This 177-nucleotide RNA was probed chemically with 2A3 and DMS.
[RMDB]
RNA sequence: GGGAACGACUCGAGUAGAGUCGAAAAAGUCGGUGGAGCGGUGAAAUGCGUAGAGAUCGACUGGAAUGCCGAUGGCGAAGGCGGUCUGCUGGGGAUCAUCUGACGCUGAGGCACGAAAGCGUGGGGAACAACCACGACUUUUCGAAGUCGUGGUUGUAAAAGAAACAACAACAACAAC
Reactivity to 2A3 in 0.01 (KOAc 150mM, MgCl2 10mM, bicine 150mM(pH8.5), 24C), signal-to-noise 1, nucleotides 027 to 126: a010g050u030c020g000g030u010g000g020a060g020c050g000g070u090g060a170a090a030u300g020c020g000u160a060g000a020g000a150u090c000g160a230c050u020g000g090a060a060u060g000c000c000g060a120u190g010g030c050g000a040a000g020g000c030g000g010u000c040u070g110c110u120g010g000g110g110a030u010c000a020u000c030u030g070a050c000g000c070u120g000a020g030g030c030a000c020g040a030a000a000g050c030g010u020g010g000g000g000a030
Reactivity to DMS in 0.01 (KOAc 150mM, MgCl2 10mM, bicine 150mM(pH8.5), 24C), signal-to-noise 2, nucleotides 027 to 126: a050g010u010c020g000g050u000g000g000a080g030c010g030g000u000g020a110a060a080u050g010c060g010u040a080g010a250g010a020u010c020g000a050c010u000g020g040a110a120u020g020c000c040g000a160u020g000g000c010g020a230a060g000g000c300g000g000u000c030u010g000c090u030g000g000g000g020a030u020c010a030u000c000u010g000a190c080g020c000u010g020a140g000g000c020a110c130g010a110a070a040g000c040g010u000g000g000g010g010a170

The 2A3 profile rests on 1,167 reads. It was measured as part of the RMDB libraries RFM100 and RFMREP. The RNA was probed in 150 mM KOAc, 10 mM MgCl2 and 150 mM bicine (pH 8.5) at 24 C. For DMS the reverse transcriptase was MarathonRT.